[RMDB]
This 177-nucleotide RNA was probed chemically with DMS and 2A3.
RNA sequence: GGGAACGACUCGAGUAGAGUCGAAAAGUGCGGUAGAAGUGGAGACACUCUGAGGCCGCGUUACGCUGAGCUGAGGCGUGAUGCCAACGGUGGUAGGCACUGGUAGUGUGACAGCUGUUACGCAUUACGCCGAAUGGAGCUUCGGCUUCGUUCGGCGAAAAGAAACAACAACAACAAC
Reactivity to DMS in 0.01 (KOAc 150mM, MgCl2 10mM, bicine 150mM(pH8.5), 24C), signal-to-noise 9, nucleotides 027 to 126: g010u020g010c010g000g010u010a050g010a080a040g020u000g010g000a240g000a180c020a020c010u000c050u010g010a160g010g010c020c030g010c010g020u010u010a050c050g000c010u010g000a090g030c090u020g010a240g000g000c010g010u000g000a030u010g000c010c090a060a070c060g000g020u020g000g010u020a080g010g010c010a020c010u000g010g010u030a060g020u010g010u010g000a080c090a190g000c020u000g000u000u000a090c250g000c020a030u010u000a090
Reactivity to 2A3 in 0.01 (KOAc 150mM, MgCl2 10mM, bicine 150mM(pH8.5), 24C), signal-to-noise 9, nucleotides 027 to 126: g110u090g000c010g010g030u070a040g030a300a010g030u020g020g040a060g020a040c010a010c010u030c030u080g080a090g140g000c010c000g000c000g000u020u040a040c030g000c030u030g040a060g030c030u050g080a020g050g010c010g010u020g010a020u040g010c010c020a040a010c030g020g020u040g020g120u080a200g070g000c010a000c030u070g140g100u150a140g020u010g010u020g060a040c020a020g000c020u010g020u060u030a030c040g000c010a010u030u050a030

Annotation: For 2A3, 26,936 sequencing reads were counted. The RNA was probed in 150 mM KOAc, 10 mM MgCl2 and 150 mM bicine (pH 8.5) at 24 C. It was measured as part of the RMDB library OK1LIB.